An RNA of 177 nucleotides, treated with 2A3 and read out base by base. Reactivities are given for positions 27 through 126. Source: RMDB library RFM100, as collected in RNAgym.

RNA sequence: GGGAACGACUCGAGUAGAGUCGAAAAUGAAAAUAUCCCACGUCUUCUAAGCAAUCUGCUUAAGGCUUCCAAACUUACCUUAAUUUGGUAAGAAAAUAAGCUGCCCUAUUUUUCUUUCUUCUUCUCUCGCACGUUACAAGUUCGCUUGUAACGUGCGAAAAGAAACAACAACAACAAC
Reactivity to 2A3 in 0.01 (KOAc 150mM, MgCl2 10mM, bicine 150mM(pH8.5), 24C), signal-to-noise 2, nucleotides 027 to 126: u110g010a050a000a030a010u130a030u000c000c000c010a000c010g020u050c010u220u000c000u060a030a020g000c020a030a300u070c040u260g010c020u070u020a080a000g000g000c000u120u000c090c050a070a110a050c010u010u000a020c000c020u090u020a160a100u160u250u070g000g010u000a000a000g070a090a050a000a010u090a010a020g000c020u000g040c010c000c000u000a050u040u080u000u010u000c010u040u050u000c000u010u000c000u000u000c010u000c000u000
For 2A3, 740 sequencing reads were counted. Conditions: 150 mM KOAc, 10 mM MgCl2 and 150 mM bicine (pH 8.5), 24 C.